[RMDB]
RNA sequence: GGGAACGACUCGAGUAGAGUCGAAAACGCAUGCGAAAGCAUGCGGCUAUGCUAAUGCAUGGCGACCGCGAUCAUGUAGAGCAGGCGGCGAUAGUGGUUAUUAUUCCGCUAUCGAUUACCAGUGUCUGUUAUUAUUCAGAUACAUGGACCUCUACCACAUUAGGAGCCAGUUCGCUGGCUCCUAAUGAAAAGAAACAACAACAACAAC
Reactivity to 2A3 in 0.01 (KOAc 150mM, MgCl2 10mM, bicine 150mM(pH8.5), 24C), signal-to-noise 2, nucleotides 027 to 156: c000g000c000a000u000g000c010g060a060a020a010g000c000a000u000g000c010g000g010c000u000a000u000g000c010u170a300a100u300g010c010a010u010g010g000c030g060a070c010c000g000c010g040a060u140c060a100u110g000u000a000g000a000g050c180a110g140g050c010g000g000c000g000a000u000a000g020u010g070g030u060u060a200u210u050a120u300u060c000c000g010c010u010a000u000c000g000a000u000u120a000c000c000a000g000u000g020u010c010u000g090u060u070a180u180u080a100u100u210c000a000g000a020u000a020c060a180u030g020g000a050c010c000u010c000u020a000c020c010a030
Reactivity to DMS in 0.01 (KOAc 150mM, MgCl2 10mM, bicine 150mM(pH8.5), 24C), signal-to-noise 1, nucleotides 027 to 156: c020g020c000a000u010g010c030g020a260a110a180g060c000a010u000g020c000g000g010c000u000a020u000g010c000u010a140a140u020g040c000a020u000g020g000c020g020a160c020c010g000c050g000a110u000c180a110u010g020u000a000g000a010g000c100a180g040g020c050g000g000c040g000a010u000a030g030u010g000g040u000u020a130u000u000a300u020u000c010c010g060c010u020a000u000c000g010a120u000u000a070c030c000a140g020u000g000u000c000u010g000u000u000a180u000u000a280u000u000c010a000g000a010u000a010c000a150u000g010g000a170c090c010u000c010u000a040c000c140a100

This 207-nucleotide RNA was probed chemically with 2A3 and DMS. The reactions ran in a buffer of 150 mM KOAc, 10 mM MgCl2 and 150 mM bicine (pH 8.5), at 24 C. Source: RMDB library OK3TST, as collected in RNAgym. The 2A3 profile rests on 1,736 reads.